[RMDB]
Record summary: Chemical mapping of a 177-nucleotide RNA with 2A3 and DMS. Values are in units of 0.01, from 0 to 300, in steps of 10. Source: RMDB libraries RFM100 and RFMREP, as collected in RNAgym. Reactivities are given for positions 27 through 126. The reactions ran in a buffer of 150 mM KOAc, 10 mM MgCl2 and 150 mM bicine (pH 8.5), at 24 C.
RNA sequence: GGGAACGACUCGAGUAGAGUCGAAAAAAUUAGAACAAACAGAGAGCUUCCAUCACAGACCGACUUUAACCUUGCCGUUCACCACCGAUUCCGGUGACAAGAGUCAUCGUCGAUAUUAAUUCGUUCAGUAGAAUAAGGAUUUCGAUCCUUAUUCUACAAAAGAAACAACAACAACAAC
Reactivity to 2A3 in 0.01 (KOAc 150mM, MgCl2 10mM, bicine 150mM(pH8.5), 24C), signal-to-noise 9, nucleotides 027 to 126: a000a010u240u160a070g030a100a020c050a100a080a020c050a050g110a010g020a010g090c030u050u010c030c010a040u050c020a020c020a060g080a050c030c020g020a020c010u070u040u040a050a040c010c010u010u020g010c010c010g020u010u020c070a130c150c010a020c010c040g030a030u140u030c040c010g000g020u010g020a010c010a080a160g080a040g090u010c000a000u010c010g080u020c020g000a000u010a030u140u200a130a130u100u080c030g020u040u040c030a020
Reactivity to DMS in 0.01 (KOAc 150mM, MgCl2 10mM, bicine 150mM(pH8.5), 24C), signal-to-noise 6, nucleotides 027 to 126: a040a060u030u010a050g010a100a060c090a090a090a070c090a080g010a110g000a100g010c050u000u000c030c030a050u020c050a060c090a100g010a120c100c010g000a020c040u000u000u010a040a070c050c010u000u000g000c010c020g000u000u000c010a070c020c020a100c170c090g000a080u010u000c070c030g000g010u000g000a020c030a120a100g010a130g010u000c020a000u000c000g020u010c060g010a040u010a070u010u020a050a100u010u000c070g020u000u010c120a110
DMS adducts were read by reverse transcription with MarathonRT.